Chemical mapping of a 177-nucleotide RNA with DMS and 2A3. The reactions ran in a buffer of 150 mM KOAc, 10 mM MgCl2 and 150 mM bicine (pH 8.5), at 24 C. The 2A3 profile rests on 2,186 reads. High 2A3 reactivity points to a flexible backbone, as in loops and unpaired stretches.
RNA sequence: GGGAACGACUCGAGUAGAGUCGAAAAGAUAUGGAUACCCAAGCUUUUGACGCUCAUUAGUCGGAAACGACUAAGUGAGCGAUAAGCUUGGUAUCCUAAGUCAAACAACCCACUUCGGUGGGUUGAACAUCUUGCUGAACUUCGGUUCAGCAAGAUGAAAAGAAACAACAACAACAAC
Reactivity to DMS in 0.01 (KOAc 150mM, MgCl2 10mM, bicine 150mM(pH8.5), 24C), signal-to-noise 1, nucleotides 027 to 126: g000a000u000a070u000g000g010a010u000a010c180c080c210a020a000g010c010u020u000u010u000g030a180c160g010c000u000c000a030u000u010a010g010u000c000g020g000a020a010a030c020g030a010c020u000a000a020g020u000g020a020g040c000g020a020u010a000a000g000c000u000u000g030g010u010a000u000c000c000u000a010a050g010u000c010a210a100a260c010a000a020c000c000c000a040c000u000u020c160g040g060u000g010g000g000u000u000g000a060a190
Reactivity to 2A3 in 0.01 (KOAc 150mM, MgCl2 10mM, bicine 150mM(pH8.5), 24C), signal-to-noise 1, nucleotides 027 to 126: g030a010u040a010u070g000g000a000u010a010c000c080c110a050a000g010c000u240u280u300u300g300a300c140g000c050u010c010a030u020u030a000g040u000c000g010g070a020a030a010c030g000a030c010u010a040a030g110u060g060a010g000c000g000a000u010a030a000g010c000u000u020g000g010u000a000u000c000c020u000a050a000g010u000c010a070a070a130c010a010a030c000c020c010a000c000u060u110c220g110g000u010g050g000g000u000u000g000a010a010